[RMDB]
Chemical mapping of a 207-nucleotide RNA with DMS. DMS adducts were read by reverse transcription with MarathonRT. Conditions: 150 mM KOAc, 10 mM MgCl2 and 150 mM bicine (pH 8.5), 24 C. The data come from the RNA Mapping Database (RMDB), library RNAMAK.
RNA sequence: GGGAACGACUCGAGUAGAGUCGAAAAGGGGUCACCGGAUCGAGGGAAAUUGCUUAAUUACCUUCUUAAGACAUGCUCUGAAGCCUCCACGGAGCAACAGCUUAAGAAGGUAAUUAAGCAAUUUCCUACCCACCGAUCCAGGUGACGGAGGCACCCAGCUAAAUUGUAUGUUCGCAUACAAUUUAGCAAAAGAAACAACAACAACAAC
Reactivity to DMS in 0.01 (KOAc 150mM, MgCl2 10mM, bicine 150mM(pH8.5), 24C), signal-to-noise 2, nucleotides 027 to 156: g040g000g050g000u000c000a060c020c040g020g020a010u000c000g030a240g020g080g000a020a010a000u000u000g020c000u000u000a020a010u010u010a010c000c000u000u000c000u010u000a020a010g000a080c030a300u000g000c000u000c000u000g010a050a160g030c040c040u000c030c070a300c050g000g020a020g040c000a030a120c110a120g010c010u000u000a000a000g000a020a000g000g010u000a000a000u000u000a000a010g000c000a000a000u010u000u000c000c020u000a010c000c000c000a300c180c000g010a030u000c010c000a040g040g020u000g000a010c000g020g010a050g010g000c040a290c000c010c010a190